RNA sequence: GGGAACGACUCGAGUAGAGUCGAAAAAUGUAGCCAGAACAUUAAUUGAAAAUAAUUGUCCUACUGAAGACUUCAGAUCUGAACUUAAAAGGAUAAAACAAAUAGUUAAUAGCAGGGACAUAAUCAACAAACUGAGUGGAGGUAUGAAGGAAAAUAGUAUGAGACGAAGAUUCGUCUUCGUCUCAUAAAAAGAAACAACAACAACAAC
Reactivity to 2A3 in 0.01 (KOAc 150mM, MgCl2 10mM, bicine 150mM(pH8.5), 24C), signal-to-noise 2, nucleotides 027 to 156: a000u040g000u020a010g070c060c040a030g030a090a020c040a060u180u220a150a120u210u100g050a040a060a030a070u100a020a150u070u030g010u000c000c010u020a050c040u050g040a090a040g070a110c030u120u020c070a030g000a120u020c000u130g040a020a050c040u050u100a050a050a020a080g010g020a040u040a130a110a030a040c060a010a100a020u120a110g030u060u070a050a020u040a140g020c040a070g020g000g010a000c000a010u070a000a030u060c020a010a030c040a060a050a060c040u040g020a010g030u010g010g030a010g000g000u040a030u100g030a020a050g050g010a020a040a000a000u020a040g160
Reactivity to DMS in 0.01 (KOAc 150mM, MgCl2 10mM, bicine 150mM(pH8.5), 24C), signal-to-noise 2, nucleotides 027 to 156: a110u000g020u000a130g000c020c020a150g030a060a080c080a070u010u010a070a150u000u000g010a100a040a060a170u010a100a130u010u030g020u000c000c000u000a090c030u000g000a130a210g000a050c060u000u010c050a130g000a110u000c050u010g000a050a090c070u010u010a060a070a170a190g000g020a130u000a020a060a060a080c050a060a120a110u040a070g020u000u000a070a170u010a060g020c000a020g020g020g020a040c060a080u010a070a050u000c030a020a090c030a040a050a140c060u000g000a090g030u020g000g010a100g020g020u010a060u000g000a100a110g020g000a020a030a010a020u010a060g030

The record gives the reactivity of an RNA of 207 nucleotides to 2A3 and DMS. The reactions ran in a buffer of 150 mM KOAc, 10 mM MgCl2 and 150 mM bicine (pH 8.5), at 24 C. High 2A3 reactivity points to a flexible backbone, as in loops and unpaired stretches.